[RMDB]
RNA sequence: GGGAACGACUCGAGUAGAGUCGAAAAGAUUUACCUGACCAUGUCGGUGCAGAUGAUUGCGGCAAUGGUCGAUACCUACGUGCCGCUGUUCGGUCAGCGACUGGGACACCUGACCCCGGUGGCAGCCCUGCCCGCUGGAGUUCGCUCCAGCGGGCAGAAAAGAAACAACAACAACAAC
Reactivity to 2A3 in 0.01 (KOAc 150mM, MgCl2 10mM, bicine 150mM(pH8.5), 24C), signal-to-noise 2, nucleotides 027 to 126: g060a000u170u170u000a220c040c060u110g080a040c000c000a000u160g020u000c050g120g110u080g050c020a080g030a120u130g020a040u090u290g100c000g000g000c070a000a160u050g040g000u010c000g060a000u100a130c000c000u010a060c120g140u070g000c030c000g000c050u000g060u120u160c000g000g120u010c050a050g040c010g100a000c000u050g000g110g000a000c040a010c000c000u030g040a070c000c000c000c000g000g010u010g000g000c000a000g030c000c000
Overview
An RNA of 177 nucleotides, treated with 2A3 and read out base by base. It was measured as part of the RMDB library OK1LIB.